RNA sequence: GGGAACGACUCGAGUAGAGUCGAAAAGGCGAACAUCAUAAAGAUCCAACUGGCGGUGCUAAAUUCUGGCGGUUCGUUACCUAAACGCUUUUUGGCAUACGGGCCAAACACCAGCCAGAACCAACCGUAAUGGACCAGGAUUCGUCCUGGUCCAUUAAAAAGAAACAACAACAACAAC
Reactivity to 2A3 in 0.01 (KOAc 150mM, MgCl2 10mM, bicine 150mM(pH8.5), 24C), signal-to-noise 1, nucleotides 027 to 126: g020g030c030g020a090a000c030a070u180c030a000u120a260a200a000g060a140u080c030c000a030a100c080u040g060g080c000g010g000u060g040c040u090a150a070a150u080u010c030u050g040g000c030g050g060u040u030c030g030u040u080a030c000c030u100a100a070a000c090g000c100u220u070u090u160u170g010g000c010a070u050a180c140g050g080g000c020c000a000a000a030c040a000c000c030a030g000c000c000a000g000a030a030c000c020a020a030c010c010g050
Reactivity to DMS in 0.01 (KOAc 150mM, MgCl2 10mM, bicine 150mM(pH8.5), 24C), signal-to-noise 2, nucleotides 027 to 126: g000g030c010g010a120a030c130a040u000c100a110u020a040a140a100g000a120u010c060c060a130a170c140u000g020g050c030g010g000u010g030c110u000a040a080a260u000u000c080u020g000g060c040g000g020u000u010c040g010u010u000a080c030c010u020a080a090a120c300g020c170u000u000u000u000u000g040g000c000a070u000a100c240g000g010g010c010c020a070a020a100c090a010c040c080a130g000c000c020a040g000a010a030c090c030a070a050c060c030g000